[RMDB]
The record gives the reactivity of an RNA of 207 nucleotides to 2A3. The 2A3 profile rests on 1,319 reads. Reactivities are given for positions 27 through 156. The data come from the RNA Mapping Database (RMDB), library M2RFPK. The reactions ran in a buffer of 150 mM KOAc, 10 mM MgCl2 and 150 mM bicine (pH 8.5), at 24 C.
RNA sequence: GGGAACGACUCGAGUAGAGUCGAAAAGACGUAAUCCGCGCAAAUCCACAAAUGCCAACGAUGAGCGUUUCGCUGUAGCCGCUUAAGGCAACAGCCGGGGCCGCCUGAGCCCUGUUACCAAAGACGGGAAACUCGAUGCCAUUCGUGGCAUCGAGAACCCUGACGCGUAAUUCGUUACGCGUCAGGGAAAAGAAACAACAACAACAAC
Reactivity to 2A3 in 0.01 (KOAc 150mM, MgCl2 10mM, bicine 150mM(pH8.5), 24C), signal-to-noise 2, nucleotides 027 to 156: g040a000c000g010u020a040a000u000c050c050g010c000g000c090a070a070a080u130c070c040a070c050a120a050a050u050g020c040c040a090a010c050g030a010u080g040a030g120c040g000u030u060u090c020g000c000u000g020u030a030g030c010c000g060c240u280u210a150a060g000g000c000a020a010c020a000g010c000c000g000g000g000g010c010c040g020c000c030u040g010a010g000c020c000c000u030g060u020u090a040c010c010a020a010a000g070a060c010g000g000g040a080a020a010c000u000c000g000a000u000g020c010c000a020u040u050c100g070u050g000g000c000a000u000c000g000a000g000a000a010